Conditions: 150 mM KOAc, 10 mM MgCl2 and 150 mM bicine (pH 8.5), 24 C. This 207-nucleotide RNA was probed chemically with 2A3. High 2A3 reactivity points to a flexible backbone, as in loops and unpaired stretches. It was measured as part of the RMDB library RNAMAK.
RNA sequence: GGGAACGACUCGAGUAGAGUCGAAAAACGUAGUUCGCUACGUAAAAAUCCUAAGUCCUGAUUCGCACGUUGAUCGGAAAUUGUCAGUCGGAAACGACUUGGAUUUAUUUCCGGGAGUGCGAAUUAGGAUAUGGAAAAAAAUCGGCUUCGGCCGAAAGGUGUCUGAUUGAUUCGUCAAUCAGACACCAAAAGAAACAACAACAACAAC
Reactivity to 2A3 in 0.01 (KOAc 150mM, MgCl2 10mM, bicine 150mM(pH8.5), 24C), signal-to-noise 2, nucleotides 027 to 156: a000c010g000u000a010g020u080u070c260g010c080u000a000c000g000u050a060a070a050a110a010u020c010c000u010a080a020g010u000c000c000u010g010a000u000u000c010g020c000a010c000g230u300u030g020a020u020c010g010g000a000a010a000u010u010g010u000c000a000g000u000c000g010g110a130a060a090c010g000a000c010u020u120g080g000a000u250u100u210a000u000u000u070c000c010g000g000g000a030g000u000g000c000g000a000a000u000u000a000g000g000a000u000a010u000g000g000a000a010a000a020a000a020a080u090c020g000g000c000u050u060c180g110g000c000c000g010a030a000a050